[RMDB]
RNA sequence: GGGAACGACUCGAGUAGAGUCGAAAAUUGUGAAUACUGAGCUUGCUUAUGCAGAGAUAUCUCGUAUCGACAAACACUACGAUAGUGUUUCUGAGGCUAACAUUGAUCUCUAUAUGGCUUCAACUAGCUUGGGUCUCAUGUUCGCAUGAGACCCAAGAAAAGAAACAACAACAACAAC
Reactivity to DMS in 0.01 (KOAc 150mM, MgCl2 10mM, bicine 150mM(pH8.5), 24C), signal-to-noise 1, nucleotides 027 to 126: u000u010g060u000g020a070a070u000a020c060u000g000a030g030c130u020u000g000c030u020u000a110u000g010c070a030g000a120g010a250u000a110u000c070u000c040g030u000a010u000c040g000a100c070a070a030a060c060a050c010u000a130c220g000a110u000a010g030u000g000u000u000u000c060u000g000a030g000g020c040u000a030a210c060a220u000u010g000a060u000c030u020c040u000a100u010a050u040g010g050c030u020u000c090a010a100c190u000a060g000
Reactivity to 2A3 in 0.01 (KOAc 150mM, MgCl2 10mM, bicine 150mM(pH8.5), 24C), signal-to-noise 1, nucleotides 027 to 126: u080u020g050u040g080a120a060u040a090c060u160g000a030g010c040u100u130g000c020u260u260a070u210g050c060a000g030a000g000a140u050a040u130c030u020c000g020u020a040u050c020g020a020c040a000a130a000c010a020c000u090a130c050g130a140u150a190g000u040g000u010u000u020c070u010g030a060g010g000c000u000a090a050c010a080u000u140g070a080u070c030u000c040u020a110u010a010u170g030g080c020u010u030c010a000a030c030u050a030g030